Structure probing data (DMS and 2A3) for a 170-nucleotide construct. The reactions ran in a buffer of 150 mM KOAc, 10 mM MgCl2 and 150 mM bicine (pH 8.5), at 24 C. It was measured as part of the RMDB library 15KLIB. For 2A3 the reverse transcriptase was SuperScript II with manganese. DMS adducts were read by reverse transcription with MarathonRT.

RNA sequence: GGGAACGACUCGAGUAGAGUCGAAAACCCCAUAAGAUGGCAGGAACCCACUCAUUGGGGUCCGCUGUUCCAUUCUUUCUUACCUUGUGGCCGGCAUGGUCCCAGCCUCCUCGCUGGCGCCGGCUGGAUCCGUUUCGGUUCGCCGAAACGAAAAGAAACAACAACAACAAC
Reactivity to DMS in 0.01 (KOAc 150mM, MgCl2 10mM, bicine 150mM(pH8.5), 24C), signal-to-noise 4, nucleotides 027 to 129: c060c010c010c170a150u030a080a050g030a000u010g000g000c060a120g020g020a000a040c000c000c000a080c270u110c180a240u050u040g000g020g000g080u020c000c030g010c050u000g030u000u040c040c040a000u010u010c000u020u010u040c120u040u050a130c080c070u030u020g030u060g020g010c030c010g000g000c000a110u000g000g000u050c230c000c000a040g000c010c060u070c040c070u060c110g000c010u000g010g020c170g000c060c000g020g050c020u050g000g000a000u100c080
Reactivity to 2A3 in 0.01 (KOAc 150mM, MgCl2 10mM, bicine 150mM(pH8.5), 24C), signal-to-noise 7, nucleotides 027 to 129: c010c000c000c000a030u070a110a040g030a040u030g010g000c050a030g030g010a040a050c010c000c000a080c070u190c070a200u120u250g000g000g000g000u010c000c000g100c030u030g040u080u050c010c010a040u080u100c000u050u120u030c020u060u110a160c080c050u090u130g100u160g150g000c000c000g000g000c020a130u140g060g040u110c040c030c000a010g010c020c010u170c040c030u090c060g000c010u000g000g000c010g010c000c000g000g010c000u020g000g000a020u000c000